[RMDB]
RNA sequence: GGGAACGACUCGAGUAGAGUCGAAAAGUAGUGAGGCUACGUCGUCUACGACGUACCACUAUGAAGCGGUGGGGAGGCUUUGGAAGUACGUGGACGAUGUAGAGUCUCCACCACAUCAACAGGGAUGCCGCCUAGGUUCGUUCGCGAACUUAGGCGGAAAAGAAACAACAACAACAAC
Reactivity to DMS in 0.01 (KOAc 150mM, MgCl2 10mM, bicine 150mM(pH8.5), 24C), signal-to-noise 3, nucleotides 027 to 126: g010u000a020g000u040g000a020g000g010c090u000a020c000g020u000c010g030u010c060u050a110c020g000a080c030g000u000a050c020c000a050c050u000a010u040g030a060a060g060c040g000g020u050g000g020g000g010a110g000g000c050u000u000u010g010g040a150a090g010u010a090c040g010u040g000g010a050c010g020a060u010g030u010a030g000a050g000u040c000u000c000c000a100c000c020a080c060a030u010c070a090a050c110a060g000g020g010a070u030g000
Reactivity to 2A3 in 0.01 (KOAc 150mM, MgCl2 10mM, bicine 150mM(pH8.5), 24C), signal-to-noise 4, nucleotides 027 to 126: g090u060a010g010u020g150a040g040g000c080u010a000c000g000u000c000g020u030c030u050a050c050g030a000c000g020u050a010c000c000a000c020u040a060u180g120a030a010g050c060g060g080u060g000g020g000g020a040g030g000c000u020u040u080g070g070a090a100g020u050a030c040g000u040g030g010a020c020g010a040u060g030u040a010g000a010g010u010c000u010c000c010a170c040c020a060c010a070u130c050a030a180c020a070g150g060g000a080u130g030